RNA sequence: GGGAACGACUCGAGUAGAGUCGAAAAUUUGAGGGAGGGAAAGGGCCCAUGGGUGGGCUCCCAUCGGGUCACCACCCAGAACAUCCAUCUUGGGUCACCAUCUCCCUAUUUGGGUGGGACUGGGUACCCUAUAGAGUCGGUUCGCCGACUCUAUAGGAAAAGAAACAACAACAACAAC
Reactivity to 2A3 in 0.01 (KOAc 150mM, MgCl2 10mM, bicine 150mM(pH8.5), 24C), signal-to-noise 1, nucleotides 027 to 126: u090u070u170g080a050g000g000g020a060g040g040g030a090a140a020g050g000g050c070c030c050a020u080g020g050g030u030g030g150g000c010u020c060c000c020a050u150c080g000g020g000u070c040a050c100c010a020c000c000c000a020g000a030a030c040a070u070c040c000a010u020c080u040u070g060g000g000u000c040a050c100c020a050u040c050u010c000c000c000u010a050u030u070u020g000g000g040u170g000g000g050a070c070u070g010g070g030u060a020c000
Reactivity to DMS in 0.01 (KOAc 150mM, MgCl2 10mM, bicine 150mM(pH8.5), 24C), signal-to-noise 2, nucleotides 027 to 126: u000u010u000g000a130g030g000g060a090g000g010g030a080a240a170g000g000g010c000c000c010a010u000g010g020g010u000g010g000g000c250u010c020c020c050a080u010c210g010g020g020u020c080a130c190c150a070c020c000c010a090g020a100a070c090a030u000c080c010a020u000c070u000u000g020g010g010u000c040a050c070c050a180u010c080u000c010c000c010u020a120u000u010u010g020g010g000u000g000g000g000a170c170u000g000g010g020u010a020c160